[RMDB]
Chemical mapping of a 177-nucleotide RNA with 2A3 and DMS. Source: RMDB library M2PK50, as collected in RNAgym. 2A3 adducts were read by reverse transcription with SuperScript II with manganese. For 2A3, 2,466 sequencing reads were counted. The RNA was probed in 150 mM KOAc, 10 mM MgCl2 and 150 mM bicine (pH 8.5) at 24 C.

RNA sequence: GGGAACGACUCGAGUAGAGUCGAAAAAGCUCCUGUUUCGACAGGAGCUGUGUGGCUGCCCUUUUGUGCUGGAUGUAGAGUGCUUUCCUGCCGGAAAGGGCUUGAGAGCUUGAUUCGUCAAGCUCAAAUUAGAUGAUCUGUUCGCAGAUCAUCUAAUAAAAGAAACAACAACAACAAC
Reactivity to 2A3 in 0.01 (KOAc 150mM, MgCl2 10mM, bicine 150mM(pH8.5), 24C), signal-to-noise 3, nucleotides 027 to 126: a000g010c000u000c020c000u000g030u000u080u100c220g090a000c000a000g000g000a000g000c000u000g000u020g020u020g110g010c060u040g000c040c000c000u000u010u010u020g160u170g020c020u040g010g010a030u060g030u180a110g110a170g300u290g110c000u300u300u050c000c010u030g000c020c000g030g010a050a050a010g000g010g010c000u010u070g050a040g000a010g020c000u020u000g000a010u060u070c160g020u010c130a000a000g000c000u010c010a010a040
Reactivity to DMS in 0.01 (KOAc 150mM, MgCl2 10mM, bicine 150mM(pH8.5), 24C), signal-to-noise 6, nucleotides 027 to 126: a020g010c000u000c000c000u000g000u000u000u000c150g010a040c000a010g010g010a010g010c000u000g000u000g030u000g010g020c110u000g010c000c000c010u000u000u000u000g000u010g020c010u000g000g010a050u000g010u010a140g010a170g020u010g010c050u000u000u000c000c000u000g010c040c050g010g000a010a020a020g000g000g010c010u000u000g010a140g000a010g000c000u000u000g000a030u000u010c190g010u000c000a000a000g000c000u000c000a020a040